[RMDB]
RNA sequence: GGGAACGACUCGAGUAGAGUCGAAAAUCACAUCACUUCUGUCAACUACGGUAUUUCUCAUGAUGGUUGCUGAAGGAAUGCCUCCGACAGCCGAAGCACUUCCACUUAUCGGAAUUUAUUUUGGCGAUGCCUGACCAUGAUUCGUCAUGGUCAGGCAAAAAGAAACAACAACAACAAC
Reactivity to 2A3 in 0.01 (KOAc 150mM, MgCl2 10mM, bicine 150mM(pH8.5), 24C), signal-to-noise 1, nucleotides 027 to 126: u040c010a030c000a060u020c000a000c020u040u000c010u030g150u210c030a040a000c000u040a000c000g090g000u110a090u040u300u010c160u050c080a150u230g110a170u040g050g000u000u010g020c010u040g010a020a000g000g020a040a020u040g040c010c000u030c030c020g030a020c000a020g010c000c010g000a010a010g010c030a000c060u040u060c010c000a070c070u200u150a100u300c040g020g010a010a000u060u160u010a120u000u030u060u040g000g000c000g010a020
Reactivity to DMS in 0.01 (KOAc 150mM, MgCl2 10mM, bicine 150mM(pH8.5), 24C), signal-to-noise 2, nucleotides 027 to 126: u010c100a070c060a060u000c150a120c000u000u000c000u000g020u000c020a040a020c030u000a000c060g000g020u000a080u000u010u010c180u020c030a060u010g020a190u000g020g010u010u000g020c040u010g010a010a020g000g000a110a160u000g000c040c010u000c070c010g020a090c200a160g000c040c030g010a040a020g000c160a090c210u010u000c010c010a130c190u010u020a140u030c140g000g030a000a000u000u000u000a140u040u000u000u000g030g010c010g000a130
This 177-nucleotide RNA was probed chemically with 2A3 and DMS. The DMS profile rests on 981 reads. It was measured as part of the RMDB library OK2TRN. The RNA was probed in 150 mM KOAc, 10 mM MgCl2 and 150 mM bicine (pH 8.5) at 24 C. 2A3 adducts were read by reverse transcription with SuperScript II with manganese.